[RMDB]
RNA sequence: GGGAACGACUCGAGUAGAGUCGAAAAAUUGCAUCACGACGAGAAGACGGACUUUUCCAUCUAGAAAUCGUUGACUCGCGCGCCGGGUUUCAAUGGGUGACAGAUUGGCUUGAACAGCGAAAAAUAGUGAUUGGUUCCAGGGGAAAGUUGGGAUGCACGGGAAUAAGUGAUUCGUCACUUAUUCCCGAAAAGAAACAACAACAACAAC
Reactivity to 2A3 in 0.01 (KOAc 150mM, MgCl2 10mM, bicine 150mM(pH8.5), 24C), signal-to-noise 2, nucleotides 027 to 156: a000u080u050g020c010a020u010c020a010c030g070a010c020g020a030g030a150a040g050a020c080g000g010a020c020u010u030u080u040c050c070a140u090c110u080a050g050a010a110a030u050c030g000u000u010g020a020c010u010c020g000c000g030c030g020c060c030g030g000g000u000u070u150c040a070a030u090g130g000g030u070g040a000c010a020g070a060u090u080g030g030c010u020u030g030a090a010c020a030g040c040g080a030a100a000a070a000u080a020g080u060g030a070u010u100g040g010u090u130c030c040a060g040g000g010g010a050a130a080g030u040u040g040g010g020a010u000g000c070a020
Reactivity to DMS in 0.01 (KOAc 150mM, MgCl2 10mM, bicine 150mM(pH8.5), 24C), signal-to-noise 1, nucleotides 027 to 156: a100u000u010g000c000a060u010c020a090c030g000a140c030g010a160g020a070a160g000a030c040g010g000a130c180u000u000u000u020c000c050a110u000c030u010a200g000a080a120a030u000c010g000u000u010g010a210c010u000c050g050c020g030c110g020c110c010g000g000g000u000u000u000c030a060a120u000g010g040g020u010g050a200c070a140g000a120u000u000g020g030c100u000u000g000a070a100c040a090g030c050g020a040a050a090a110a080u000a080g050u000g000a060u010u000g000g010u000u000c080c030a160g010g070g070g000a060a020a120g030u010u010g030g000g060a080u010g000c060a160